[RMDB]
RNA sequence: GGGAACGACUCGAGUAGAGUCGAAAAUAGGAGAUUGUGCAUAUAUAGGACCAUAUGAAGAUAUGGCAAGUCGACUAUCAGCUACACAAACUGCAAUCAAACAUGGGUGUCCUCCAAGUCUUGCCUGUCGACUCACAUAAUUCGUUAUGUGAGUCGAAAAAGAAACAACAACAACAAC
Reactivity to 2A3 in 0.01 (KOAc 150mM, MgCl2 10mM, bicine 150mM(pH8.5), 24C), signal-to-noise 3, nucleotides 027 to 126: u100a010g020g040a040g010a020u030u080g050u080g070c020a020u070a010u040a000u050a200g110g030a080c010c020a030u030a050u150g110a070a060g030a140u020a010u040g020g000c020a020a010g090u070c030g030a020c010u040a030u120c020a010g020c050u120a070c060a010c030a100a110a050c040u110g030c010a030a080u090c010a110a100a050c010a090u080g080g000g000u010g040u000c000c000u000c000c010a030a000g020u000c030u050u050g040c020c020u060g050
Reactivity to DMS in 0.01 (KOAc 150mM, MgCl2 10mM, bicine 150mM(pH8.5), 24C), signal-to-noise 4, nucleotides 027 to 126: u010a090g000g020a140g010a080u000u000g020u000g010c040a040u010a090u000a060u000a070g010g020a120c020c020a020u000a040u000g010a150a110g010a030u000a010u000g000g010c030a080a050g010u000c050g000a110c050u000a050u000c090a060g010c050u010a060c100a050c120a050a040a090c080u000g000c110a040a070u000c140a070a040a090c130a060u000g010g010g030u000g010u010c020c020u000c040c060a050a130g000u000c060u010u020g010c030c040u000g020